Structure probing data (DMS) for a 177-nucleotide construct. DMS adducts were read by reverse transcription with MarathonRT. The RNA was probed in 150 mM KOAc, 10 mM MgCl2 and 150 mM bicine (pH 8.5) at 24 C. Values cover nucleotides 27 to 126. The DMS profile rests on 909 reads. It was measured as part of the RMDB library OK2TRN.
RNA sequence: GGGAACGACUCGAGUAGAGUCGAAAAGUAUGAGAUUCAACCUCAUUUUGUACAUGCAUUGCACCAGCUAAAAGAUUCGCGUUUACAGAUUGCAGAUCGUUCUGCGGAGCAGUUGGAUCAAGAGUAAAUUUACGCCUGAGUUCGCUCAGGCGUAAAUAAAAGAAACAACAACAACAAC
Reactivity to DMS in 0.01 (KOAc 150mM, MgCl2 10mM, bicine 150mM(pH8.5), 24C), signal-to-noise 2, nucleotides 027 to 126: g020u010a080u000g000a210g000a160u000u000c070a040a030c010c030u010c010a130u000u000u010u020g020u000a050c040a050u000g030c010a130u000u020g020c000a110c160c110a150g020c120u000a030a110a130a110g000a130u030u000c160g030c120g030u000u010u000a050c030a020g020a040u000u050g020c000a020g020a070u000c280g020u010u000c020u000g000c050g040g050a070g010c170a090g040u000u000g000g000a030u000c000a060a140g000a070g000u060a080a050